[RMDB]
RNA sequence: GGGAACGACUCGAGUAGAGUCGAAAACUUUUAAGUCGUUAGUGCUUGACACUGACUUCGUGGAUCGCGUGUAUUCGUAUGCCUUGAACACGGUGUCUAACUUUGAGAUGCGGACGUUUGAGUAUGCCGUCGGGGCCGUGAGAUCGCAGAAAACUCAACCCAGAUAUUGAUUCGUCAAUAUCUGGGUAAAAGAAACAACAACAACAAC
Reactivity to DMS in 0.01 (KOAc 150mM, MgCl2 10mM, bicine 150mM(pH8.5), 24C), signal-to-noise 2, nucleotides 027 to 156: c020u000u000u000u000a080a140g010u000c060g060u010u010a060g020u000g020c050u000u000g000a170c050a120c050u010g020a090c020u010u000c030g070u000g000g010a050u000c050g020c070g040u010g020u010a050u000u010c060g020u000a050u010g020c040c010u000u020g020a050a080c060a130c020g000g000u010g010u000c040u010a060a100c060u010u000u000g010a160g010a110u000g030c030g000g020a040c040g040u010u000u000g010a090g020u010a030u000g020c030c030g030u000c030g030g000g000g000c000c000g030u000g000a080g030a100u000c040g040c030a120g000a090a040a100a180c000u000c030a090
Reactivity to 2A3 in 0.01 (KOAc 150mM, MgCl2 10mM, bicine 150mM(pH8.5), 24C), signal-to-noise 5, nucleotides 027 to 156: c030u080u110u100u170a160a050g040u070c030g030u040u060a020g000u020g040c040u140u200g040a130c000a000c010u020g020a020c000u030u040c100g060u090g050g010a060u030c070g010c020g020u070g020u090a190u070u060c020g010u050a020u160g030c000c010u030u070g040a050a010c020a030c090g030g020u030g040u000c050u060a090a130c050u120u140u230g130a080g010a050u110g070c010g000g080a070c060g040u000u050u030g030a030g000u120a070u200g020c020c020g020u040c040g000g010g010g010c010c000g000u010g010a030g000a010u050c010g000c050a000g070a050a090a020a020c020u050c050a000
Structure probing data (DMS and 2A3) for a 207-nucleotide construct. DMS adducts were read by reverse transcription with MarathonRT. For DMS, 6,396 sequencing reads were counted. For 2A3, 3,500 sequencing reads were counted.